[RMDB]
RNA sequence: GGGAACGACUCGAGUAGAGUCGAAAAGCCAUGAGUCGCAACGCAAAGCCGCGGCAAGUGGAGUUAGCGAGAAGAGACUAGGCUUUGGUUUCUUCAAGUGAAGCGGUCACCAAUCAGGUGUGGUAGUACGGACUAAAGGAUUCGUCCUUUAGUCCGUAAAAGAAACAACAACAACAAC
Reactivity to 2A3 in 0.01 (KOAc 150mM, MgCl2 10mM, bicine 150mM(pH8.5), 24C), signal-to-noise 4, nucleotides 027 to 126: g110c000c000a020u040g030a010g020u020c010g010c040a050a050c030g030c150a240a170a040g010c030c080g000c010g020g000c020a050a000g010u010g030g020a110g060u100u150a020g010c020g000a030g020a080a000g000a000g000a000c000u000a060g150g220c060u220u170u130g000g000u000u000u000c000u000u010c020a080a020g000u010g070a080a010g040c050g010g040u060c000a010c030c060a030a270u200c050a050g100g000u030g010u040g050g080u030a010g100u000
Reactivity to DMS in 0.01 (KOAc 150mM, MgCl2 10mM, bicine 150mM(pH8.5), 24C), signal-to-noise 4, nucleotides 027 to 126: g000c000c000a060u010g000a290g000u000c010g000c000a140a130c110g050c180a090a070a090g030c220c110g030c010g000g000c060a050a140g030u000g010g000a130g030u010u010a120g000c010g000a300g000a030a040g000a060g000a020c000u020a040g000g020c170u000u050u010g000g000u000u010u010c010u000u010c010a040a270g020u010g010a130a160g000c070g000g020u000c020a010c000c010a140a100u070c220a130g000g020u020g000u000g030g000u040a090g000u020
The record gives the reactivity of an RNA of 177 nucleotides to 2A3 and DMS. The RNA was probed in 150 mM KOAc, 10 mM MgCl2 and 150 mM bicine (pH 8.5) at 24 C. For 2A3 the reverse transcriptase was SuperScript II with manganese. It was measured as part of the RMDB libraries RFM100 and RFMREP. Values cover nucleotides 27 to 126.